[RMDB]
RNA sequence: GGGAACGACUCGAGUAGAGUCGAAAAUAAUCAAGAUGAAUCGUUUUUAGUUUGCUUGCUUACCUUAUGGGCCAGGAUGAGAUCAACUUGAAUCUUUUUAUGUAGGCAGAAAGCGACGGAAUUUAAAACCUACCUGAUGGUUCGCCAUCAGGUAGGUAAAAGAAACAACAACAACAAC
Reactivity to 2A3 in 0.01 (KOAc 150mM, MgCl2 10mM, bicine 150mM(pH8.5), 24C), signal-to-noise 2, nucleotides 027 to 126: u120a020a070u180c040a010a010g120a080u190g120a060a090u070c110g000u000u000u000u000u300a110g020u050u050u170g000c030u050u010g000c000u000u000a080c000c000u030u090a200u180g000g120g020c000c000a020g000g040a040u060g000a060g000a030u000c030a080a130c060u040u010g030a070a100u000c000u000u000u100u000u000a110u120g020u000a000g000g000c010a010g070a050a040a000g020c020g010a030c050g010g070a040a040u010u010u220a160a070a000
Reactivity to DMS in 0.01 (KOAc 150mM, MgCl2 10mM, bicine 150mM(pH8.5), 24C), signal-to-noise 1, nucleotides 027 to 126: u060a090a110u020c060a090a050g040a060u000g000a100a100u000c060g000u000u040u040u020u000a140g000u020u020u030g060c000u000u010g010c030u000u010a020c000c070u000u010a030u000g000g030g020c090c030a040g030g000a110u010g000a060g000a060u010c060a100a150c210u020u090g040a050a070u000c010u000u020u000u010u010a010u020g020u000a000g000g000c090a040g000a100a080a010g000c070g020a000c120g010g010a100a050u020u020u000a040a030a040